[RMDB]
An RNA of 207 nucleotides, treated with 2A3 and DMS and read out base by base. The reactions ran in a buffer of 150 mM KOAc, 10 mM MgCl2 and 150 mM bicine (pH 8.5), at 24 C. For 2A3 the reverse transcriptase was SuperScript II with manganese. DMS adducts were read by reverse transcription with MarathonRT.

RNA sequence: GGGAACGACUCGAGUAGAGUCGAAAAGCGAGGAUUCUCUACAAUGAUUUACAGGAAAAGCUAACGAAUUUAACAGCUAUGUCGCUUGUUCUCCCUGCAAUUUCCGAAAUUGUUAAGCGUAAAAAAGACGUACAUGCUGAACGAGUGCAGUUCUACAGUAUUUACGAUUAUUCGUAAUCGUAAAUACAAAAGAAACAACAACAACAAC
Reactivity to 2A3 in 0.01 (KOAc 150mM, MgCl2 10mM, bicine 150mM(pH8.5), 24C), signal-to-noise 9, nucleotides 027 to 156: g050c040g020a040g070g060a120u140u020c040u000c020u080a060c080a130a120u150g060a080u150u130u170a110c100a080g080g020a080a060a030a020g040c040u090a070a070c090g060a100a090u130u170u140a190a050c030a010g010c020u090a050u110g080u060c010g000c000u030u020g020u110u040c030u000c030c000c000u010g000c020a040a090u030u040u040c100c080g090a070a050a040u020u020g030u050u140a080a050g020c030g050u110a060a100a030a050a020a040g070a030c020g020u050a020c020a060u100g020c020u040g020a050a020c020g010a020g040u050g040c050a050g020u010u020c010u040a050c030a040
Reactivity to DMS in 0.01 (KOAc 150mM, MgCl2 10mM, bicine 150mM(pH8.5), 24C), signal-to-noise 6, nucleotides 027 to 156: g010c040g010a170g020g030a120u000u000c030u000c020u010a130c080a100a100u010g000a140u000u000u020a080c050a110g000g010a040a020a060a080g010c030u000a040a100c030g020a090a110u000u000u000a070a180c070a130g010c110u000a070u000g010u000c010g010c020u000u000g000u000u010c030u010c020c000c010u000g000c030a030a060u000u000u010c100c100g000a080a110a080u000u010g000u000u000a060a090g030c060g020u010a000a060a070a100a080a110g010a070c040g020u000a070c090a080u010g010c030u000g010a080a070c060g010a150g030u000g010c030a120g000u000u010c040u000a070c100a190